[RMDB]
RNA sequence: GGGAACGACUCGAGUAGAGUCGAAAACAGCUACGCGCCACGCGGUUAAAGGCUGAAAGCAUCUAAGCCUGAAACCGCCCCCGAAAAGAGCCGCCCAUUAAGGGCUCCCGUAAAAGACGGGGUUGAUAGUUCUAUUUAGUUUCGACUAAAUAGAACUAAAAGAAACAACAACAACAAC
Reactivity to DMS in 0.01 (KOAc 150mM, MgCl2 10mM, bicine 150mM(pH8.5), 24C), signal-to-noise 6, nucleotides 027 to 126: c100a080g000c040u010a050c080g020c050g010c030c060a110c150g010c000g010g030u000u000a050a190a030g010g010c000u010g000a130a080a120g010c130a050u010c030u000a220a060g000c010c010u000g000a170a050a040c000c000g000c010c040c010c000c010g000a070a060a110a100g000a100g010c080c080g000c020c010c010a150u020u030a120a090g010g010g000c020u000c010c000c010g010u000a080a050a090a170g000a070c020g000g010g000g000u010u010g000a170u010
Reactivity to 2A3 in 0.01 (KOAc 150mM, MgCl2 10mM, bicine 150mM(pH8.5), 24C), signal-to-noise 2, nucleotides 027 to 126: c010a010g030c020u120a070c080g050c010g000c060c020a070c030g000c010g020g010u000u010a060a040a010g000g000c000u000g040a110a030a030g110c010a020u090c030u100a020a010g000c000c000u010g010a080a020a000c010c000g000c000c000c000c000c000g090a120a120a020a010g040a030g100c010c030g010c000c030c010a070u170u150a100a100g000g000g030c000u020c010c000c000g000u020a140a150a000a010g170a030c010g010g000g010g010u030u070g050a040u030
This 177-nucleotide RNA was probed chemically with DMS and 2A3. 2A3 adducts were read by reverse transcription with SuperScript II with manganese. The RNA was probed in 150 mM KOAc, 10 mM MgCl2 and 150 mM bicine (pH 8.5) at 24 C.